Chemical mapping of a 177-nucleotide RNA with 2A3 and DMS. It was measured as part of the RMDB library M2PK90.
[RMDB]
RNA sequence: GGGAACGACUCGAGUAGAGUCGAAAAAUUACGGGCGGCGCAGGUGGAGCUGCGAUCCCUCCGCCCAUCGCGUGCUCUCUGGGUGGCCCAGACGCUGCAAACGGACAGGCGGGCCACCUGCAACGAAAGCUCACUAUAACUUCGGUUAUAGUGAGCUAAAAGAAACAACAACAACAAC
Reactivity to 2A3 in 0.01 (KOAc 150mM, MgCl2 10mM, bicine 150mM(pH8.5), 24C), signal-to-noise 2, nucleotides 027 to 126: a000u140u090a090c040g020g010g030c000g030g030c040g030c070a000g010g020u100g100g150a090g100c000u000g010c030g030a070u060c000c010c000u000c000c000g000c000c000c000a010u020c070g060c020g050u040g020c010u020c020u030c070u150g000g000g000u000g010g000c010c000c010a100g080a180c130g050c130u000g040c060a140a200a170c030g050g150a070c000a020g030g000c000g000g010g000c010c000a000c000c010u010g010c000a020a000c020g050a080a060
Reactivity to DMS in 0.01 (KOAc 150mM, MgCl2 10mM, bicine 150mM(pH8.5), 24C), signal-to-noise 2, nucleotides 027 to 126: a040u010u010a130c140g010g000g000c020g000g050c060g010c100a050g020g040u000g010g020a200g000c020u000g020c020g000a070u000c010c020c010u030c000c010g000c000c010c020a100u010c080g020c050g010u010g020c040u000c040u010c140u000g010g020g020u000g000g000c000c000c010a110g030a090c080g020c000u020g000c110a080a130a140c300g000g000a160c000a000g000g000c070g000g010g000c000c000a010c010c010u000g010c070a050a010c120g000a090a110

The DMS profile rests on 1,281 reads.